[RMDB]
RNA sequence: GGGAACGACUCGAGUAGAGUCGAAAAGGUCAUCCUUCACAGGAUCGUGUGGAAGUCCUGCUCGGGGCGGAAGCAUUAAAACCAUUCGAACUAGUCAAUGCGUGGCGUGUCUCUCCGCAGCGUGUUGUGUAUGAGAGUGGAUUCGUCCACUCUCAAAUGUUGCUGAUAACUUCGGUUAUCAGCAACAAAAAGAAACAACAACAACAAC
Reactivity to 2A3 in 0.01 (KOAc 150mM, MgCl2 10mM, bicine 150mM(pH8.5), 24C), signal-to-noise 1, nucleotides 027 to 156: g050g000u080c020a050u060c000c050u160u240c120a050c060a060g080g060a140u090c130g040u050g000u030g020g080a030a070g020u000c000c000u000g050c130u150c120g090g010g010g000c010g000g020a000a000g000c000a000u030u070a000a070a000a030c000c000a060u110u140c050g060a050a040c060u120a080g300u090c020a000a000u030g020c000g030u000g000g000c030g010u080g020u060c000u000c000u000c110c040g000c030a030g000c000g030u030g000u000u000g000u000g040u000a080u130g000a000g010a000g000u000g000g010a010u070u030c110g020u000c000c000a000c000u000c000u000c000a040a040a000
The record gives the reactivity of an RNA of 207 nucleotides to 2A3. High 2A3 reactivity points to a flexible backbone, as in loops and unpaired stretches. The 2A3 profile rests on 705 reads. The data come from the RNA Mapping Database (RMDB), library M2RFPK.